[RMDB]
Chemical mapping of a 177-nucleotide RNA with DMS and 2A3. Source: RMDB libraries RFM100 and RFMREP, as collected in RNAgym. 2A3 adducts were read by reverse transcription with SuperScript II with manganese. Conditions: 150 mM KOAc, 10 mM MgCl2 and 150 mM bicine (pH 8.5), 24 C.
RNA sequence: GGGAACGACUCGAGUAGAGUCGAAAAACUCAGAAAGCGUUUCUUGAGCUUCCCGGGGAUGAGCGUCUGGGAGAGCUGAUUCUGCAGACCGGCUAGGAGCCGCAGGGCGUUCUCCGGGGCGCGGCCCGACCUUGCUAGUAUUCGUACUAGCAAGGUCAAAAGAAACAACAACAACAAC
Reactivity to DMS in 0.01 (KOAc 150mM, MgCl2 10mM, bicine 150mM(pH8.5), 24C), signal-to-noise 3, nucleotides 027 to 126: a160c010u000c010a040g000a070a060a160g020c280g000u010u000u010c000u000u010g000a010g020c040u010u000c000c000c000g040g010g000g000a090u030g010a130g010c010g010u010c000u000g000g030g000a010g010a010g020c010u050g010a120u010u000c030u000g000c010a060g000a140c150c070g000g000c120u030a110g010g020a190g020c120c020g010c000a000g000g000g020c050g000u000u000c000u010c000c030g000g000g010g000c020g010c000g010g000c000c000c010
Reactivity to 2A3 in 0.01 (KOAc 150mM, MgCl2 10mM, bicine 150mM(pH8.5), 24C), signal-to-noise 9, nucleotides 027 to 126: a000c010u000c010a010g080a050a110a040g240c120g090u040u050u000c030u080u130g010a010g000c010u010u000c000c000c000g000g000g000g000a230u190g030a040g040c000g010u000c010u070g080g000g000a010g000a000g000c050u070g080a300u040u020c000u010g000c020a080g080a250c050c050g010g040c070u140a130g070g160a070g100c040c010g000c010a010g000g020g010c000g000u010u000c000u000c010c000g000g000g000g010c000g000c000g010g010c030c000c000